The data come from the RNA Mapping Database (RMDB), library OK2TST.
Structure probing data (DMS and 2A3) for a 177-nucleotide construct.
RNA sequence: GGGAACGACUCGAGUAGAGUCGAAAAGACCGACUUUGGCGAACGUAUUCCAACCGAUGUUCAAUGGUUUGACGGUUCCGAUCCGCAGAAAAUGCAUAACCAUUAUGCGUACAUCUACAACGAACUGCACGUGCAACGAUUUCGAUCGUUGCACGUGAAAAGAAACAACAACAACAAC
Reactivity to DMS in 0.01 (KOAc 150mM, MgCl2 10mM, bicine 150mM(pH8.5), 24C), signal-to-noise 2, nucleotides 027 to 126: g010a180c190c010g030a070c000u010u000u000g000g010c000g000a060a060c100g010u010a130u020u000c010c040a080a090c170c090g010a070u000g000u000u000c060a060a130u000g010g000u010u010u000g010a120c020g000g030u000u010c020c030g040a080u000c050c060g020c090a090g000a040a070a130a070u000g010c030a010u000a000a080c190c100a050u010u010a030u000g030c050g000u000a090c150a000u000c030u000a100c090a030a090c140g000a010a070c190u010g000
Reactivity to 2A3 in 0.01 (KOAc 150mM, MgCl2 10mM, bicine 150mM(pH8.5), 24C), signal-to-noise 2, nucleotides 027 to 126: g060a020c000c040g030a050c030u060u040u080g060g020c040g020a040a020c000g070u040a190u110u070c010c000a030a020c030c050g000a040u040g040u040u090c060a100a030u060g010g030u010u030u120g060a070c050g040g000u200u000c040c000g050a110u030c010c040g000c040a010g130a070a120a020a020u120g000c060a020u020a090a050c080c030a030u090u060a010u090g030c050g020u010a020c010a120u030c000u060a060c060a100a000c040g050a050a030c010u070g000
Reactivities are given for positions 27 through 126. The reactions ran in a buffer of 150 mM KOAc, 10 mM MgCl2 and 150 mM bicine (pH 8.5), at 24 C. 2A3 adducts were read by reverse transcription with SuperScript II with manganese.